[RMDB]
RNA sequence: GGGAACGACUCGAGUAGAGUCGAAAAAUAGUGUAGGACGAUCCAGAGAACCCUUCACCUUAGUCUUCUACAGACUGUUACCGGCAUCCAUCUCUGAAGAAUGUACUUGGAGCAGCUUAUUAGAUCAAAAAAUGAAACCUUUCGAGGUUUCAUUUUUAAAAGAAACAACAACAACAAC
Reactivity to 2A3 in 0.01 (KOAc 150mM, MgCl2 10mM, bicine 150mM(pH8.5), 24C), signal-to-noise 3, nucleotides 027 to 126: a010u140a020g080u050g030u060a060g000g020a020c080g030a060u010c010c020a030g010a010g020a160a100c010c010c000u020u030c010a030c010c010u030u070a020g010u050c000u100u040c020u070a050c020a090g060a120c010u020g040u050u130a150c050c000g010g000c000a030u040c010c010a060u050c050u030c030u080g080a010a050g040a070a050u100g020u120a080c050u080u080g010g000a020g000c020a000g000c040u070u080a070u070u090a140g040a020u100c060a010
Reactivity to DMS in 0.01 (KOAc 150mM, MgCl2 10mM, bicine 150mM(pH8.5), 24C), signal-to-noise 4, nucleotides 027 to 126: a080u050a100g010u000g000u000a060g000g000a040c060g010a060u030c030c040a070g000a110g010a100a170c060c020c010u000u020c050a080c040c060u000u020a060g010u010c020u000u010c100u020a100c110a050g010a060c050u000g000u010u010a080c060c030g000g000c060a030u020c030c020a050u000c040u020c030u010g000a120a080g000a080a070u020g000u010a050c060u000u020g000g000a090g010c070a060g000c050u000u010a050u020u010a070g010a070u020c060a000